[RMDB]
RNA sequence: GGGAACGACUCGAGUAGAGUCGAAAAGGGGUCGGACCAUCGAUCGAUCUCCAGCGAAGAACUACACUGAAGCCUCCACGGUGUAGGGAGCUGGAAGAUCGGGAGGUCCGACGGAGGCACCCAAAGAAAUCAAACCUCUUCGGAGGUUUGAUUUCAACCUCACUUAUCGAUUCGUCGAUAAGUGAGGAAAAGAAACAACAACAACAAC
Reactivity to 2A3 in 0.01 (KOAc 150mM, MgCl2 10mM, bicine 150mM(pH8.5), 24C), signal-to-noise 2, nucleotides 027 to 156: g060g010g070g010u010c000g010g000a000c010c020a090u300c040g000a020u000c000g010a000u000c010u000c000c010a000g000c000g160a300a010g000a010a000c000u010a000c000a000c010u030g030a080a030g020c010c000u040c000c000a010c000g000g000u000g000u000a000g020g000g000a010g000c000u000g000g010a060a000g000a000u000c000g000g000g000a030g000g000u000c000c000g000a000c000g000g000a000g000g010c000a020c000c000c000a080a150a010g010a000a000a000u010c000a010a000a010c000c010u010c050u140u280c300g120g000a000g000g000u000u010u020g000a000u000u000u010c000a000a000

An RNA of 207 nucleotides, treated with 2A3 and read out base by base. Values cover nucleotides 27 to 156. The 2A3 profile rests on 3,407 reads. The RNA was probed in 150 mM KOAc, 10 mM MgCl2 and 150 mM bicine (pH 8.5) at 24 C. It was measured as part of the RMDB library RNAMAK.